[RMDB]
RNA sequence: GGGAACGACUCGAGUAGAGUCGAAAAUGAGACAAACACGUUUCACAAUGUGCGGCAAAGAAACAUUGUUUAUGCAAAGGCACUUCGCAAUGUGUGCUCAAACAUUGCUUAUUCAAACACGCUUCACAAAAGAAUCAGUGGUUCGCCACUGAUUCAACAUUUUGCAAUAGUUCGCUAUUGCAAAAUGAAAAGAAACAACAACAACAAC
Reactivity to DMS in 0.01 (KOAc 150mM, MgCl2 10mM, bicine 150mM(pH8.5), 24C), signal-to-noise 4, nucleotides 027 to 156: u000g010a080g010a130c040a110a110a100c090a090c070g020u000u000u000c080a080c060a070a060u000g030u000g030c100g020g010c040a070a100a110g000a140a060a050c040a050u000u000g000u000u020u000a060u010g020c050a060a100a130g030g020c020a020c040u000u000c130g010c090a090a020u000g020u000g010u000g000c020u010c060a070a140a050c050a050u000u000g000c030u000u000a070u000u000c060a080a070a080c080a060c110g030c040u000u000c040a120c090a050a060a110a150g010a030a010u000c000a020g030u010g010g010u000u010c300g020c010c010a010c010u000g000a010u000u000c000a040a090
Reactivity to 2A3 in 0.01 (KOAc 150mM, MgCl2 10mM, bicine 150mM(pH8.5), 24C), signal-to-noise 9, nucleotides 027 to 156: u140g010a020g040a040c060a020a200a010c070a030c130g010u000u020u020c040a040c040a070a080u040g000u020g010c030g030g010c060a100a080a080g080a050a120a020c030a030u030u040g050u050u100u080a090u120g040c060a090a070a080g130g000c010a010c000u080u070c070g020c080a050a080u080g010u000g020u020g020c040u080c170a040a060a010c020a020u000u020g000c000u060u080a110u100u110c070a050a090a030c060a020c120g070c030u090u090c050a030c040a080a080a040a040g000a000a000u000c000a000g000u010g030g030u040u050c180g040c040c000a000c000u000g000a000u000u000c000a000a000
Source information:
An RNA of 207 nucleotides, treated with DMS and 2A3 and read out base by base. Source: RMDB library M2RFPK, as collected in RNAgym. The reactions ran in a buffer of 150 mM KOAc, 10 mM MgCl2 and 150 mM bicine (pH 8.5), at 24 C. DMS (dimethyl sulfate) methylates the pairing face of unpaired adenines and cytosines.